[RMDB]
RNA sequence: GGGAACGACUCGAGUAGAGUCGAAAAAGCGCGCAAUGUGUACAUGGGUAUUCCCCCAUAUCUGUGUACUAUAGCUGAGAGGACUUGUGGGGUGUUGUGUGCAGUGCAAGUGUAUUUGGUGCGCGAAGUGUAUAUAUUAAUUCGUUAAUAUAUACACAAAAGAAACAACAACAACAAC
Reactivity to DMS in 0.01 (KOAc 150mM, MgCl2 10mM, bicine 150mM(pH8.5), 24C), signal-to-noise 5, nucleotides 027 to 126: a090g010c010g010c000g020c020a130a050u020g020u000g000u000a000c010a010u010g000g010g010u000a010u010u020c030c010c000c020c080a280u000a010u000c010u000g020u000g010u000a010c010u010a070u030a130g010c030u000g010a080g000a100g010g010a040c020u000u000g010u000g010g010g010g010u010g000u010u010g000u010g010u010g000c040a090g000u010g010c030a020a040g010u020g020u020a090u010u010u000g000g010u000g010c020g020c010g010a050a110
Reactivity to 2A3 in 0.01 (KOAc 150mM, MgCl2 10mM, bicine 150mM(pH8.5), 24C), signal-to-noise 5, nucleotides 027 to 126: a000g030c000g000c000g000c020a030a090u130g050u020g000u050a000c000a000u010g000g000g020u010a010u080u170c000c000c000c000c010a000u010a000u000c010u010g010u010g000u010a000c000u070a020u080a030g010c020u020g040a020g010a020g080g050a030c010u030u030g010u080g020g030g010g030u080g030u060u120g060u020g050u060g040c050a040g030u010g060c000a040a040g020u020g030u080a110u030u080u090g040g010u040g000c020g000c010g010a060a040
Overview: Structure probing data (DMS and 2A3) for a 177-nucleotide construct. Source: RMDB library OK1LIB, as collected in RNAgym. The RNA was probed in 150 mM KOAc, 10 mM MgCl2 and 150 mM bicine (pH 8.5) at 24 C.